[RMDB]
RNA sequence: GGGAACGACUCGAGUAGAGUCGAAAAGGUGUGAGAGCAUGGCCCCCACCACUGGGACUGAGACACUGCCCAGACACCUGCGGGUGGCUGCAGUCGAGAAUCUUCCGCAAUGGGCGAAAGCCUGACGGCCCUAAACCAAUUUCGAUUGGUUUAGGGCAAAAGAAACAACAACAACAAC
Reactivity to 2A3 in 0.01 (KOAc 150mM, MgCl2 10mM, bicine 150mM(pH8.5), 24C), signal-to-noise 3, nucleotides 027 to 126: g030g000u020g010u030g070a140g020a010g040c040a040u120g020g030c000c000c000c000c000a060c010c010a020c030u040g010g020g060a070c010u080g030a030g030a120c030a030c090u080g020c020c030c010a010g000a010c010a040c010c010u020g020c160g050g020g000u010g020g000c010u060g030c010a010g020u050c030g030a010g020a070a110u020c030u110u020c030c000g000c050a080a120u150g020g020g000c020g010a060a010a000g010c000c000u000g020a030c020g040
Reactivity to DMS in 0.01 (KOAc 150mM, MgCl2 10mM, bicine 150mM(pH8.5), 24C), signal-to-noise 2, nucleotides 027 to 126: g000g020u010g000u000g000a110g000a140g000c070a070u000g000g010c070c000c000c000c030a120c060c070a150c050u000g000g020g000a050c050u020g000a160g000a080c120a100c040u020g000c050c050c040a050g000a040c030a030c030c050u000g000c190g000g000g020u000g050g030c020u000g000c080a030g030u000c080g010a060g000a040a100u020c110u000u010c010c000g000c160a040a020u050g000g000g000c010g020a090a080a120g010c000c000u000g010a050c100g000